[RMDB]
RNA sequence: GGGAACGACUCGAGUAGAGUCGAAAAUGCCUCCCGUGGGGCACGCCUUUUUUCGUUGCGAAAUAAAACAUGUCCUUUAUUCCCGCUCCUGGAUUGUGUUUCUUGCGCGAUGAUAUGGCUAUGACAAUACGAUACUACUCUUCGGAGUAGUAUCGUAAAAAGAAACAACAACAACAAC
Reactivity to 2A3 in 0.01 (KOAc 150mM, MgCl2 10mM, bicine 150mM(pH8.5), 24C), signal-to-noise 8, nucleotides 027 to 126: u070g010c000c000u010c050c030c020g080u220g000g010g000g010c040a010c050g010c010c000u070u110u020u020u030u040c040g030u040u140g040c050g080a070a070a110u180a020a070a010a010c030a020u020g020u040c000c000u100u130u070a100u110u090c000c000c010g030c030u060c010c020u040g010g040a070u080u160g020u000g020u030u010u030c060u040u110g020c030g000c010g030a060u050g040a010u040a050u160g030g000c040u040a070u180g040a030c030a050a060
Reactivity to DMS in 0.01 (KOAc 150mM, MgCl2 10mM, bicine 150mM(pH8.5), 24C), signal-to-noise 4, nucleotides 027 to 126: u020g010c030c020u000c010c070c110g030u010g010g000g020g020c030a040c180g000c020c010u000u000u010u000u010u000c020g040u010u000g030c060g010a030a060a070u010a050a040a060a050c040a050u000g000u010c010c020u000u020u020a120u040u000c020c010c010g010c200u000c040c050u010g000g010a060u000u010g040u000g000u010u000u010c150u000u000g000c080g000c020g000a020u000g010a080u010a100u010g010g000c030u010a080u010g000a110c190a070a130